The record gives the reactivity of an RNA of 177 nucleotides to DMS and 2A3. For 2A3 the reverse transcriptase was SuperScript II with manganese. Values cover nucleotides 27 to 126. DMS adducts were read by reverse transcription with MarathonRT. The RNA was probed in 150 mM KOAc, 10 mM MgCl2 and 150 mM bicine (pH 8.5) at 24 C.
[RMDB]
RNA sequence: GGGAACGACUCGAGUAGAGUCGAAAAAGUACAUAAAGUCGCGCAAGUGUUUCACUCGGUUGCGGCCAAAUACGACAUCAUGAAUGACCUGAUGUCGGGCGGUAUCCACCGUUUAUGGAAGCGCUUACAUGCAGCUGGAGUUCGCUCCAGCUGCAUGAAAAGAAACAACAACAACAAC
Reactivity to DMS in 0.01 (KOAc 150mM, MgCl2 10mM, bicine 150mM(pH8.5), 24C), signal-to-noise 2, nucleotides 027 to 126: a030g010u000a060c040a000u000a060a090a110g010u000c010g050c000g030c020a090a000g000u000g000u030u010u010c040a050c060u000c070g040g020u000u010g000c040g020g030c000c060a030a070a120u010a150c010g010a010c000a000u010c000a010u000g010a260a110u020g010a150c130c060u000g020a000u000g000u020c000g000g000g010c030g000g000u010a090u010c090c100a150c050c070g000u000u000u010a090u000g000g020a040a060g050c080g010c010u000u000a140
Reactivity to 2A3 in 0.01 (KOAc 150mM, MgCl2 10mM, bicine 150mM(pH8.5), 24C), signal-to-noise 1, nucleotides 027 to 126: a000g080u060a040c010a030u110a090a110a060g100u040c000g000c000g000c000a020a050g020u000g120u110u120u270c010a000c000u020c050g140g010u080u270g010c070g060g090c020c000a050a170a000u270a030c020g010a010c000a030u010c020a020u090g210a250a130u260g090a150c030c000u030g010a030u020g000u010c020g070g020g000c050g010g030u030a060u050c020c000a030c010c030g000u000u090u030a070u080g040g050a020a000g150c030g000c050u010u050a020